[RMDB]
Background
This 177-nucleotide RNA was probed chemically with 2A3 and DMS. The data come from the RNA Mapping Database (RMDB), library OK1LIB. Conditions: 150 mM KOAc, 10 mM MgCl2 and 150 mM bicine (pH 8.5), 24 C. The DMS profile rests on 5,178 reads.
RNA sequence: GGGAACGACUCGAGUAGAGUCGAAAAAGCACGAGACGAAUACUCUCUCGAAAAGGUGAAAGCGCUCUAUGGAAAUAAAUAAACGUAGAGUGACCGAAUAAAAGUCGAUCGUGCGAAGAGAGAGGAAGGGUACAUAGUAGUUCGCUACUAUGUACCCAAAAGAAACAACAACAACAAC
Reactivity to 2A3 in 0.01 (KOAc 150mM, MgCl2 10mM, bicine 150mM(pH8.5), 24C), signal-to-noise 4, nucleotides 027 to 126: a000g070c020a030c030g080a070g100a070c040g030a040a020u110a130c010u000c000u000c000u000c050g100a040a040a040a090g040g010u080g080a140a060a060g130c030g020c000u010c000u000a000u010g040g070a050a100a030u180a070a020a040u160a080a130a020c010g000u000a000g000a000g010u010g020a040c000c010g030a050a010u160a070a070a020a000g040u020c040g030a090u010c010g000u000g000c010g000a080a020g010a000g000a010g000a000g000g090a020a050
Reactivity to DMS in 0.01 (KOAc 150mM, MgCl2 10mM, bicine 150mM(pH8.5), 24C), signal-to-noise 3, nucleotides 027 to 126: a050g000c000a010c010g010a110g020a090c070g000a060a090u030a130c010u000c000u000c020u020c010g000a090a090a090a140g000g040u010g000a090a210a110g000c050g040c000u000c000u010a000u000g000g010a040a070a150u020a070a080a060u030a080a090a120c000g000u000a010g010a010g020u000g000a010c000c010g010a110a030u030a020a080a070a120g030u000c010g000a120u000c020g010u010g000c030g000a040a110g010a060g020a000g010a010g000g010a120a110